[RMDB]
RNA sequence: GGGAACGACUCGAGUAGAGUCGAAAACGGAAGACAGUGAGUGGACGGAAUAAAUCCCCUUCCCACCUCCCCACUGUCCACUCACUGUCUUCCUAAAAGGAAAUAUAAAUCGGGGGUGGGAAGGGGAAUGAGCUAAUAGUUUCGACUAUUAGCUCAUAAAAGAAACAACAACAACAAC
Reactivity to 2A3 in 0.01 (KOAc 150mM, MgCl2 10mM, bicine 150mM(pH8.5), 24C), signal-to-noise 4, nucleotides 027 to 126: c020g000g000a000a000g010a010c000a010g010u000g010a000g020u010g030g000a000c000g020g040a060a030u130a110a090a100u150c000c000c000c000u010u000c000c000c010a000c000c000u030c070c120c000c020a020c010u000g000u020c000c000a000c000u000c010a010c000u010g000u000c010u000u000c000c010u010a000a000a010a000g060g020a020a100a010u250a030u060a040a150a040u280c150g000g000g000g000g000u010g000g000g000a000a000g000g000g000g000a000
Reactivity to DMS in 0.01 (KOAc 150mM, MgCl2 10mM, bicine 150mM(pH8.5), 24C), signal-to-noise 1, nucleotides 027 to 126: c150g040g000a000a000g030a010c030a010g020u000g000a000g030u010g000g010a010c000g010g020a130a060u050a060a060a140u010c020c000c010c000u000u000c010c000c010a000c000c020u000c000c010c220c180a080c050u000g020u020c000c000a000c020u030c010a000c000u000g000u000c000u000u020c010c000u020a020a020a070a140g040g000a100a140a060u070a110u020a060a080a020u000c150g020g010g000g010g000u000g000g000g000a000a020g000g010g000g040a040

The data come from the RNA Mapping Database (RMDB), library OK1LIB. This 177-nucleotide RNA was probed chemically with 2A3 and DMS. The RNA was probed in 150 mM KOAc, 10 mM MgCl2 and 150 mM bicine (pH 8.5) at 24 C. High DMS reactivity at an A or C suggests that its Watson-Crick edge is free. For 2A3, 7,545 sequencing reads were counted. The DMS profile rests on 3,038 reads. Values cover nucleotides 27 to 126.